[RMDB]
RNA sequence: GGGAACGACUCGAGUAGAGUCGAAAAUUGAGGACGCAUUUUGUCCGUGCGGUAAUGCCCUCCUUUACACUUUCUCGCAUGGUGCGGGAGUGUGGAGAGGAAACAAAAGCUAGUCUCAGUUGGCAGUACUAGUUCAAGUGUUCGCACUUGAACUAGUAAAAGAAACAACAACAACAAC
Reactivity to 2A3 in 0.01 (KOAc 150mM, MgCl2 10mM, bicine 150mM(pH8.5), 24C), signal-to-noise 2, nucleotides 027 to 126: u030u020g010a000g000g080a020c020g000c130a110u000u040u110u150g100u010c030c090g000u030g000c020g000g110u180a070a040u170g040c000c000c000u070c010c000u040u000u050a030c020a010c000u080u110u000c040u010c010g000c020a070u300g300g040u260g080c000g010g000g000a000g000u030g010u020g020g010a030g000a010g020g000a080a040a060c070a010a060a010a000g020c050u050a030g030u010c010u010c050a040g010u100u060g020g000c020a020g040u020
Reactivity to DMS in 0.01 (KOAc 150mM, MgCl2 10mM, bicine 150mM(pH8.5), 24C), signal-to-noise 2, nucleotides 027 to 126: u010u000g000a070g010g010a070c010g000c060a020u000u000u010u010g000u000c060c100g010u010g000c000g000g010u020a070a090u010g000c000c010c020u000c080c010u000u000u000a100c000a000c000u000u010u010c000u000c010g030c020a300u010g010g010u010g030c000g020g000g000a010g020u000g020u010g000g000a020g020a010g000g000a030a060a020c050a020a050a090a130g010c020u000a070g000u000c010u000c000a040g010u010u010g020g000c100a110g010u010